RNA sequence: GGGAACGACUCGAGUAGAGUCGAAAAGAAAGAAAGAAAGUUCAUUGUUUAUCGGAAACUUUAAACUAUAACCAUUCAAACUUUUCCAGAAGUUAGUUUGAAUAGAAAUUCAAAAGAAACUUCUGAAUAACCUUAUCAUGCUUCGGCAUGAUAAGAACUAUAAAUUGACGUUCGCGUCAAUUUAUAGAAAAGAAACAACAACAACAAC
Reactivity to 2A3 in 0.01 (KOAc 150mM, MgCl2 10mM, bicine 150mM(pH8.5), 24C), signal-to-noise 2, nucleotides 027 to 156: g070a000a010a010g030a000a090a000g110a110a060a020g000u040u090c030a040u070u180g040u180u190u150a120u210c040g060g070a060a060a060c000u010u040u030a100a070a010c010u050a030u050a210a020c030c000a000u000u000c000a000a020a030c000u000u000u000u030c040c010a000g000a010a000g000u000u010a000g000u000u000u000g010a000a030u080a100g070a020a070a040u250u250c060a010a030a010a010g010a010a010a010c000u010u010c000u000g010a000a030u060a050a010c000c000u000u010a000u000c000a000u000g010c000u030u050c080g060g000c010a000u000g000a000u000a000a000g000a000a000
The record gives the reactivity of an RNA of 207 nucleotides to 2A3. Reactivities are given for positions 27 through 156. For 2A3, 1,212 sequencing reads were counted. The RNA was probed in 150 mM KOAc, 10 mM MgCl2 and 150 mM bicine (pH 8.5) at 24 C. For 2A3 the reverse transcriptase was SuperScript II with manganese.